[RMDB]
RNA sequence: GGGAACGACUCGAGUAGAGUCGAAAAGUGGCUACCUUGACGGCGCCCACAAUUGUGAAUCAAGAGAGGUAUGUUAAAAUUACUGGGUUGUACCCAACCAUUACGGUACCUGAAGAGUUCGCAAGUCAUAGCCGACAGUUCGCUGUCGGCAAAAGAAACAACAACAACAAC
Reactivity to DMS in 0.01 (KOAc 150mM, MgCl2 10mM, bicine 150mM(pH8.5), 24C), signal-to-noise 3, nucleotides 027 to 129: g030u010g000g000c030u000a070c120c150u000u000g000a070c170g010g050c250g050c150c020c000a040c130a000a140u000u000g000u000g020a050a030u010c140a110a080g030a170g000a040g000g010u000a020u010g020u000u000a060a070a130a080u020u010a050c150u020g020g000g020u010u040g040u060a190c010c050c020a070a120c190c180a090u020u050a000c060g040g040u000a010c020c000u000g000a200a080g000a090g000u040u010c060g060c020a040a040g040u010c070a130u040a090
Reactivity to 2A3 in 0.01 (KOAc 150mM, MgCl2 10mM, bicine 150mM(pH8.5), 24C), signal-to-noise 4, nucleotides 027 to 129: g070u060g030g000c000u040a060c000c020u040u030g010a030c050g000g030c020g020c000c030c000a040c020a080a150u070u010g030u000g020a010a000u030c110a210a050g050a010g000a020g150g000u010a030u010g020u040u160a080a080a080a090u120u050a070c090u060g000g030g000u020u040g070u130a080c010c010c010a010a040c010c020a020u040u090a030c080g010g000u000a000c000c000u070g060a080a030g030a040g140u040u010c000g000c000a000a000g010u090c020a070u090a020